[RMDB]
Annotation
The record gives the reactivity of an RNA of 177 nucleotides to DMS and 2A3. The DMS profile rests on 7,400 reads. The 2A3 profile rests on 12,685 reads. For 2A3 the reverse transcriptase was SuperScript II with manganese.

RNA sequence: GGGAACGACUCGAGUAGAGUCGAAAAGAUAUGGAUGUGUGGGAGCCUGGCAUCGGAAACGAUGUACAGGCGACGAUCACACACGUCCUAAGUCAAAGAUCUUAGCGCGUUCGCGCGCUAAGAUCAACUAUAAGUAGCACUUCGGUGCUACUUAUAGAAAAGAAACAACAACAACAAC
Reactivity to DMS in 0.01 (KOAc 150mM, MgCl2 10mM, bicine 150mM(pH8.5), 24C), signal-to-noise 4, nucleotides 027 to 126: g010a020u000a070u000g000g000a030u000g000u000g010u000g000g000g000a050g020c000c000u000g000g010c000a000u000c010g010g000a020a010a040c000g000a010u000g000u000a090c010a000g000g010c010g010a030c160g000a160u010c020a090c010a000c020a020c190g000u000c000c000u000a010a120g000u000c020a120a100a130g010a010u000c000u000u000a000g000c000g030c000g000u000u010c240g020c010g000c010g010c000u000a000a000g000a010u000c010a020a110
Reactivity to 2A3 in 0.01 (KOAc 150mM, MgCl2 10mM, bicine 150mM(pH8.5), 24C), signal-to-noise 2, nucleotides 027 to 126: g000a010u020a000u060g000g000a000u010g000u000g000u000g020g020g010a040g020c010c000u010g000g010c000a000u000c000g000g020a020a010a010c000g000a000u020g010u150a300c010a000g010g050c000g000a010c010g000a010u020c000a010c000a000c010a000c120g020u010c000c000u010a010a010g010u000c050a150a050a120g000a010u020c000u000u000a000g000c020g010c020g020u080u060c290g000c020g000c000g040c170u000a000a000g000a000u010c000a000a000